[RMDB]
RNA sequence: GGGAACGACUCGAGUAGAGUCGAAAAGAUAUGGAUCAUCUAAGGGAGAUGAUGAUUCGGAAACGAAUCAUACCAUCUUUGAUCUUACAUGAUGAUCCUAAGUCAAAUCUCUUGUUCGCAAGAGAAAGUUCCAAUGACUGUUCGCAGUCAUUGGAACAAAAGAAACAACAACAACAAC
Reactivity to 2A3 in 0.01 (KOAc 150mM, MgCl2 10mM, bicine 150mM(pH8.5), 24C), signal-to-noise 1, nucleotides 027 to 126: g000a000u020a010u030g000g000a010u000c000a010u000c000u020a000a030g040g020g000a050g010a000u000g080a000u000g000a000u030u020c000g000g010a020a000a010c000g000a000a050u000c010a000u060a130c190c040a020u000c020u300u230u010g000a010u000c000u000u050a120c180a300u290g000a000u010g000a000u000c000c000u000a000a010g010u000c010a130a100a300u030c010u000c000u020u030g040u090u050c300g000c170a000a020g000a010g000a130a050a020
Reactivity to DMS in 0.01 (KOAc 150mM, MgCl2 10mM, bicine 150mM(pH8.5), 24C), signal-to-noise 1, nucleotides 027 to 126: g000a010u000a100u010g000g000a030u000c000a000u000c000u010a000a030g000g000g000a000g010a000u010g010a030u010g000a010u000u000c000g000g020a010a020a050c030g000a000a000u000c000a000u000a040c300c010a000u000c000u000u000u010g000a000u000c000u000u000a040c300a130u000g030a000u000g040a000u030c000c000u020a000a060g000u000c000a180a110a090u010c000u000c000u000u000g000u000u000c300g020c000a010a050g000a000g000a030a070a150